[RMDB]
RNA sequence: GGGAACGACUCGAGUAGAGUCGAAAAGGUCCCAGCCUCCUCGCUGGCGCCGGCUGGGCAACAUUCCGAGGGGACCGUCCCUCGGUAAUGGCGAAUGGGACCCAGAACUCUCUCUAGAUUCCCAGAGUAGCCCUGAUGUUCGCAUCAGGGAAAAGAAACAACAACAACAAC
Reactivity to 2A3 in 0.01 (KOAc 150mM, MgCl2 10mM, bicine 150mM(pH8.5), 24C), signal-to-noise 9, nucleotides 027 to 129: g010g000u010c000c010c000a010g010c000c030u070c010c010u060c060g040c030u040g080g020c060g070c050c020g040g020c040u090g000g010g010c010a030a020c010a050u060u020c010c000g000a010g020g010g010g050a150c030c070g300u300c020c000c000u000c000g000g000u020a020a020u030g010g010c050g090a080a080u080g000g010g000a010c010c000c000a010g040a080a030c000u000c000u000c000u000c000u000a030g000a100u010u000c000c000c010a010g020a010g030u250a050g030
Reactivity to DMS in 0.01 (KOAc 150mM, MgCl2 10mM, bicine 150mM(pH8.5), 24C), signal-to-noise 5, nucleotides 027 to 129: g000g000u030c040c020c010a120g030c050c060u040c000c070u030c190g040c050u060g000g000c110g040c010c020g000g080c040u000g000g010g010c110a080a030c040a100u040u040c020c020g000a000g000g010g050g030a070c170c180g070u140c020c010c010u010c000g030g010u020a020a050u040g020g020c030g000a090a100u070g020g020g020a060c000c000c000a070g000a150a100c000u030c020u000c040u060c020u010a060g000a270u000u000c030c000c000a090g030a060g000u090a070g030